[RMDB]
Overview:
Structure probing data (2A3 and DMS) for a 207-nucleotide construct. For DMS the reverse transcriptase was MarathonRT.
RNA sequence: GGGAACGACUCGAGUAGAGUCGAAAAAGCUUAUAAUUUCACUUACUAACGCACAAAAUAGAAAUUUAAGAUGCUAUGUCUCAGUUUCGUAAUCUAUUUAGUAUAAGGCGAUAUGGCCUUCGUCAGGAACGGGAACAUGUCCGUCCGCAACGUGCUCCGUUAGGUGUAGUUUCGACUACACCUAACGAAAAGAAACAACAACAACAAC
Reactivity to 2A3 in 0.01 (KOAc 150mM, MgCl2 10mM, bicine 150mM(pH8.5), 24C), signal-to-noise 4, nucleotides 027 to 156: a000g100c120u190u070a130u100a170a070u050u130u120c070a060c060u130u210a040c010u070a070a050c040g010c050a000c040a040a110a070a050u050a060g030a020a060a030u100u110u060a090a020g020a030u030g010c030u060a050u210g070u030c000u020c060a020g010u000u070u050c040g020u040a010a070u010c020u040a090u130u100u080a040g030u020a060u040a160a010g000g010c010g050a110u050a070u240g080g010c010c000u000u020c020g070u010c020a040g000g060a050a020c010g020g030g000a050a090c020a120u110g050u040c010c000g000u010c000c000g010c020a020a050c080g050u040g010c010u040c030
Reactivity to DMS in 0.01 (KOAc 150mM, MgCl2 10mM, bicine 150mM(pH8.5), 24C), signal-to-noise 2, nucleotides 027 to 156: a090g020c050u000u000a070u000a070a130u010u000u000c000a070c030u000u000a120c090u010a050a080c100g020c060a080c060a100a080a070a120u030a120g000a040a040a060u000u010u000a080a050g020a140u000g020c020u010a050u000g030u000c010u010c010a120g020u000u000u000c070g000u000a070a110u000c100u000a080u000u000u010a090g020u000a140u010a020a080g030g020c040g010a190u000a060u000g030g000c030c010u000u000c000g020u020c020a220g010g000a080a070c020g000g030g010a040a060c040a060u000g000u010c010c030g030u010c030c040g000c050a060a030c040g070u000g040c060u000c000